[RMDB]
RNA sequence: GGGAACGACUCGAGUAGAGUCGAAAACGCAUGGCGAAACGCGCGAGACACGCGGCUGCGGGACAAUCUCGUGCUCUACCUGCGCAUUCAGCUGCUGCUGGGAGGCCUGGAGGGGCCGGGGGAUGGCCUAAGUAGGUGUCUUCGGACACCUACUUAGAAAAGAAACAACAACAACAAC
Reactivity to 2A3 in 0.01 (KOAc 150mM, MgCl2 10mM, bicine 150mM(pH8.5), 24C), signal-to-noise 2, nucleotides 027 to 126: c030g010c040a050u180g030g000c050g030a060a070a040c060g010c000g020c010g020a010g020a030c070a020c050g040c000g120g110c150u210g000c020g060g060g050a050c050a040a090u020c010u010c010g020u030g020c000u040c020u030a090c010c020u040g000c050g000c030a020u040u070c020a010g000c020u170g010c030u070g000c020u010g030g050g010a070g050g000c020c050u050g020g020a060g010g040g000g020c100c000g000g020g000g000g030a100u080g050g000c000
Reactivity to DMS in 0.01 (KOAc 150mM, MgCl2 10mM, bicine 150mM(pH8.5), 24C), signal-to-noise 4, nucleotides 027 to 126: c050g000c030a030u020g020g000c030g020a050a050a110c090g020c000g010c010g010a050g010a080c130a080c030g020c040g020g050c170u010g020c020g000g010g010a080c160a110a200u010c020u000c010g020u000g000c020u000c070u000a070c050c020u000g000c020g010c070a120u010u010c060a050g010c060u000g010c090u000g010c030u010g000g010g000a100g020g010c030c020u010g010g030a210g010g000g020g010c040c050g000g010g010g010g000a120u000g000g020c100

Chemical mapping of a 177-nucleotide RNA with 2A3 and DMS. It was measured as part of the RMDB library OK2TRN. DMS adducts were read by reverse transcription with MarathonRT. For DMS, 4,024 sequencing reads were counted. Reactivities are given for positions 27 through 126. Values are in units of 0.01, from 0 to 300, in steps of 10. The 2A3 profile rests on 3,517 reads.